Notes
This 177-nucleotide RNA was probed chemically with DMS and 2A3. For DMS the reverse transcriptase was MarathonRT. It was measured as part of the RMDB library M2PK50. Reactivities are given for positions 27 through 126. The reactions ran in a buffer of 150 mM KOAc, 10 mM MgCl2 and 150 mM bicine (pH 8.5), at 24 C. For 2A3, 8,130 sequencing reads were counted.
RNA sequence: GGGAACGACUCGAGUAGAGUCGAAAACACAUUCUAUUCGUAGAAUGUGGAACGUAGAGAGAUCGACAGCGUGGCAGCUAUGUCGAACGAGGAAGAGCGCGCAGGGAUCGGGCUUCGGCCCGAUCAAUUUACCCAUUUAAUUCGUUAAAUGGGUAAAAAAAGAAACAACAACAACAAC
Reactivity to DMS in 0.01 (KOAc 150mM, MgCl2 10mM, bicine 150mM(pH8.5), 24C), signal-to-noise 9, nucleotides 027 to 126: c000a000c000a000u000u000c000u000a020u000u010c170g020u000a010g000a010a010u000g020u000g000g010a070a070c120g010u000a080g010a120g010a130g010a080u000c030g000a050c040a050g010c060g010u000g010g010c100a080g000c030u000a050u000g010u000c010g010a030a100c080g000a100g000g000a050a040g000a050g010c030g020c070g010c100a090g010g010g000a010u000c000g000g010g010c010u000u010c220g030g010c000c000c000g010a000u000c010a040a060
Reactivity to 2A3 in 0.01 (KOAc 150mM, MgCl2 10mM, bicine 150mM(pH8.5), 24C), signal-to-noise 4, nucleotides 027 to 126: c000a000c000a000u000u010c000u020a030u050u070c150g090u030a000g000a010a000u000g010u010g010g030a050a020c030g070u150a020g050a000g000a010g000a200u020c010g020a010c020a000g020c060g030u060g110g010c030a030g000c050u090a070u190g030u040c010g000a050a050c020g030a050g050g030a060a070g020a010g050c030g000c030g020c050a040g120g030g040a000u010c000g000g000g000c010u050u080c200g070g010c010c000c000g000a000u010c000a010a000